Notes:
This 177-nucleotide RNA was probed chemically with DMS and 2A3. 2A3 adducts were read by reverse transcription with SuperScript II with manganese. The reactions ran in a buffer of 150 mM KOAc, 10 mM MgCl2 and 150 mM bicine (pH 8.5), at 24 C. It was measured as part of the RMDB library OK1LIB.
[RMDB]
RNA sequence: GGGAACGACUCGAGUAGAGUCGAAAAGAAAAACGAUGAAUGAGCCUAAUAUACGCAAGGCGCUAUCAAAACAAACAAAAUCCGAUGCAAGCGUAUAUUAAGAAAUGCAUUGGAAAAGAAAAGAAAACGGGACUAAUAUAUUCGUAUAUUAGUCCCGAAAAGAAACAACAACAACAAC
Reactivity to DMS in 0.01 (KOAc 150mM, MgCl2 10mM, bicine 150mM(pH8.5), 24C), signal-to-noise 2, nucleotides 027 to 126: g000a100a070a060a100a110c150g000a070u010g000a050a220u010g000a110g010c000c000u010a140a110u010a020u010a000c000g000c000a120a030g010g000c030g000c030u000a140u000c040a100a040a060a090c180a060a070a210c120a030a140a120a110u000c010c000g030a000u000g010c000a020a150g040c010g020u000a000u000a060u060u030a040a130g000a050a020a060u000g000c010a000u010u000g000g000a010a050a090a080g010a060a130a100a060g020a050a020a050a130
Reactivity to 2A3 in 0.01 (KOAc 150mM, MgCl2 10mM, bicine 150mM(pH8.5), 24C), signal-to-noise 2, nucleotides 027 to 126: g070a030a040a010a000a020c100g080a070u170g040a050a080u120g010a020g000c010c000u010a030a040u050a000u000a020c000g000c010a000a000g010g000c010g000c060u060a010u140c020a010a060a110a170c120a070a100a000c030a040a070a030a150u020c000c000g000a000u020g000c000a020a030g000c000g000u000a000u010a000u100u200a070a010g070a020a040a010u030g000c010a000u030u020g020g000a000a110a020a020g050a020a050a010a000g110a010a110a000a020